[RMDB]
RNA sequence: GGGAACGACUCGAGUAGAGUCGAAAAGACCGGUGGGCAGCUUCCUGGACACGAGGACUUGGUGCGGGGGGCCGAUGCCCUGGGAAGGUGGUGAGAGUUGGACGUGGUGCUGGGCGGUCUCUGGGCACCAUAGCCACCGAUUCGUCGGUGGCUAUGGAAAAGAAACAACAACAACAAC
Reactivity to DMS in 0.01 (KOAc 150mM, MgCl2 10mM, bicine 150mM(pH8.5), 24C), signal-to-noise 1, nucleotides 027 to 126: g010a130c040c020g000g010u000g000g010g020c040a070g000c040u000u000c000c020u010g040g000a100c060a050c100g020a130g010g000a100c180u010u010g000g020u010g000c030g050g000g010g000g000g000c030c150g000a100u000g000c010c010c010u000g000g030g000a060a050g000g010u010g000g000u010g000a160g040a120g010u000u010g000g020a070c150g000u010g000g000u010g020c100u000g000g000g010c040g010g000u010c030u000c060u000g030g000g010c080a160